Annotation: This 177-nucleotide RNA was probed chemically with 2A3 and DMS. Values cover nucleotides 27 to 126. The RNA was probed in 150 mM KOAc, 10 mM MgCl2 and 150 mM bicine (pH 8.5) at 24 C. DMS adducts were read by reverse transcription with MarathonRT. It was measured as part of the RMDB library OK2TST.

RNA sequence: GGGAACGACUCGAGUAGAGUCGAAAAGGCCCUUCUUGCUGGCCAAGCUGACGGACAUUUACAAGGUCCCCCUGGACGGGUACGGCCGCAUGAACGGCCGGGGCGUGUUUCGCGUGUGGGACAUAGGAUCCCGUAGCAUGUUCGCAUGCUACGGGAUAAAAGAAACAACAACAACAAC
Reactivity to 2A3 in 0.01 (KOAc 150mM, MgCl2 10mM, bicine 150mM(pH8.5), 24C), signal-to-noise 1, nucleotides 027 to 126: g000g000c000c040c000u000u050c020u000u000g000c110u300g000g040c000c030a030a040g000c090u090g100a080c140g060g000a010c010a060u090u090u070a130c120a110a180g050g040u040c000c000c000c010c020u090g040g160a040c050g030g000g040u050a030c060g000g020c000c000g010c000a050u010g020a010a000c000g050g000c030c000g030g000g030g020c020g050u050g040u100u090u090c010g000c020g020u050g030u100g040g000g000a020c000a030u120a070g130g040
Reactivity to DMS in 0.01 (KOAc 150mM, MgCl2 10mM, bicine 150mM(pH8.5), 24C), signal-to-noise 2, nucleotides 027 to 126: g020g020c000c000c060u000u020c010u010u010g040c050u010g050g000c060c020a070a220g000c050u010g010a100c120g000g030a030c040a050u010u010u020a150c270a140a090g010g020u000c010c000c050c030c030u000g010g010a120c170g000g000g010u000a140c300g000g000c010c010g000c020a060u000g000a050a070c200g010g020c000c030g000g000g020g020c040g000u000g000u020u000u000c030g030c070g030u000g010u020g010g000g000a070c060a100u000a130g000g000